[RMDB]
RNA sequence: GGGAACGACUCGAGUAGAGUCGAAAAUUCGACUCCUCUUCGUCUCGGUUUGGCUCAUCCUCGGGACGAGGCGAGGGUCCUCAGUUCUCUCUAUUCUUUCCCUUUGAAAGAGGAGACUGCUGGACCAAACGCCCGAGCCGGGAUGGGCCGCAUGCCGCACUGUUACAUGCUUCGGCAUGUAACAGUGAAAAGAAACAACAACAACAAC
Reactivity to 2A3 in 0.01 (KOAc 150mM, MgCl2 10mM, bicine 150mM(pH8.5), 24C), signal-to-noise 1, nucleotides 027 to 156: u090u030c030g000a010c000u010c000c010u010c030u090u040c030g020u050c020u000c010g020g000u120u080u170g010g040c000u000c000a000u020c000c030u170c060g020g010g170a090c040g010a080g000g000c000g000a030g090g000g000u030c010c000u000c000a160g010u300u010c030u000c000u000c030u090a240u190u070c010u050u020u040c070c090c000u180u110u300g010a010a020a010g000a000g000g020a020g000a000c000u030g090c050u000g000g000a030c020c000a120a220a080c000g020c000c000c010g040a100g080c010c010g000g010g000a000u000g000g000g000c000c000g000c000a000u040g010c000c000g010

An RNA of 207 nucleotides, treated with 2A3 and read out base by base. The RNA was probed in 150 mM KOAc, 10 mM MgCl2 and 150 mM bicine (pH 8.5) at 24 C. For 2A3, 1,006 sequencing reads were counted.